[RMDB]
RNA sequence: GGGAACGACUCGAGUAGAGUCGAAAAGACGCCUUUAGAAGAAUAGGCUAGGGGGUAUUCCGGUGUGGGAUACUUAGUAAUAUGCAACGCUAAUUGCAUAAGAUUGUAGGACGGAAUUUACAGUCUUUAGAGAUAAGCACGUUCGCGUGCUUAUCAAGAGUCACAAAUGAUUCGUCAUUUGUGACUCAAAAGAAACAACAACAACAAC
Reactivity to DMS in 0.01 (KOAc 150mM, MgCl2 10mM, bicine 150mM(pH8.5), 24C), signal-to-noise 2, nucleotides 027 to 156: g020a150c090g000c000c020u000u000u000a140g010a200a080g030a150a080u000a070g010g000c040u010a080g000g020g030g010g050u000a040u000u020c020c020g010g030u000g060u000g020g000g000a040u000a010c000u010u010a080g020u000a080a110u000a050u010g000c030a030a090c050g020c140u020a050a200u000u000g000c000a070u000a080a100g000a040u000u000g000u000a040g040g040a140c020g000g010a110a250u000u010u000a080c000a050g010u000c000u000u000u000a150g000a270g000a000u010a010a000g000c010a010c010g080u000u000c230g030c050g120u000g030c010u000u000a000u000c000a030a140
Reactivity to 2A3 in 0.01 (KOAc 150mM, MgCl2 10mM, bicine 150mM(pH8.5), 24C), signal-to-noise 4, nucleotides 027 to 156: g050a020c050g020c020c000u060u070u110a190g010a250a020g010a150a150u050a090g020g000c020u050a060g010g020g020g010g020u010a030u020u050c030c030g100g100u210g040u160g080g000g000a000u010a040c000u020u030a040g020u070a050a100u020a030u090g000c010a030a010c040g020c120u130a110a080u090u010g000c010a020u010a050a040g030a020u030u050g020u030a020g000g070a020c090g020g060a080a040u100u120u050a050c010a010g010u010c000u030u080u090a130g010a000g010a050u000a000a000g000c000a010c000g000u010u030c080g010c010g060u000g000c000u000u000a000u000c000a000a000
Overview
Structure probing data (DMS and 2A3) for a 207-nucleotide construct. The RNA was probed in 150 mM KOAc, 10 mM MgCl2 and 150 mM bicine (pH 8.5) at 24 C. DMS (dimethyl sulfate) methylates the pairing face of unpaired adenines and cytosines. 2A3 adducts were read by reverse transcription with SuperScript II with manganese. For DMS, 2,947 sequencing reads were counted.